[RMDB]
RNA sequence: GGGAACGACUCGAGUAGAGUCGAAAAUCUGCAAAUAGUCAGAUUACUAUUGAGUGAUCGCCAUGUAGCUAAGCACCAUGAUACAUGCUUGUAUAUGAAUGACUCAUUUAAUUCUUACAGCAAUCCUGUGGGACAUGUAUUAUUAUUGUCAGCUGCACUCAGGCUAAGGUUUCGACCUUAGCCUGAGAAAAGAAACAACAACAACAAC
Reactivity to 2A3 in 0.01 (KOAc 150mM, MgCl2 10mM, bicine 150mM(pH8.5), 24C), signal-to-noise 2, nucleotides 027 to 156: u020c020u060g000c040a000a080a300u150a170g140u170c060a040g000a080u070u070a030c050u050a100u120u210g050a040g080u050g000a020u040c080g010c080c050a030u060g020u060a000g000c020u040a170a140g040c060a040c050c010a020u020g000a020u030a020c010a010u000g060c010u130u180g150u120a120u080a060u170g080a090a060u150g060a120c050u000c030a030u040u110u020a070a110u030u000c020u040u010a000c010a000g010c050a020a130u260c020c010u000g000u060g030g000g000a000c010a030u030g040u010a050u030u000a030u060u050a150u050u030g060u070c040a020g000c020u020g000c030a020